[RMDB]
RNA sequence: GGGAACGACUCGAGUAGAGUCGAAAAGAUAUGGAACAGGACCCAACUUUUGACGUUCCCGCUUCGGAAACGAAGUAGGAACGAUAAGUUGCCUGUUCCUAAGUCAAAACUCCAGUUCGCUGGAGAAGAUAUAGCCCUCGUUCGCGAGGGCUAUAUCAAAAGAAACAACAACAACAAC
Reactivity to DMS in 0.01 (KOAc 150mM, MgCl2 10mM, bicine 150mM(pH8.5), 24C), signal-to-noise 1, nucleotides 027 to 126: g020a070u000a300u000g000g020a010a010c000a010g020g000a300c200c300c060a020a000c040u000u000u000u000g010a220c150g000u000u000c000c000c020g020c000u040u000c000g000g010a090a100a280c000g020a000a000g040u020a050g000g000a020a010c000g000a060u000a020a000g010u000u000g000c010c000u000g000u000u000c010c000u020a020a020g020u050c030a060a120a090a130c020u000c000c000a010g000u000u000c250g000c000u000g000g000a000g010a030a020
Reactivity to 2A3 in 0.01 (KOAc 150mM, MgCl2 10mM, bicine 150mM(pH8.5), 24C), signal-to-noise 1, nucleotides 027 to 126: g010a030u050a000u090g000g030a000a000c020a040g050g010a100c170c200c080a030a010c040u140u230u210u300g290a140c040g020u000u010c000c000c000g000c000u010u000c000g050g050a070a060a060c000g000a000a020g000u010a020g000g000a000a000c000g010a020u030a120a000g000u000u010g100c000c000u000g000u000u000c000c000u000a000a030g030u000c040a050a050a180a030c000u000c000c000a020g020u080u150c300g140c220u010g030g020a020g000a090a030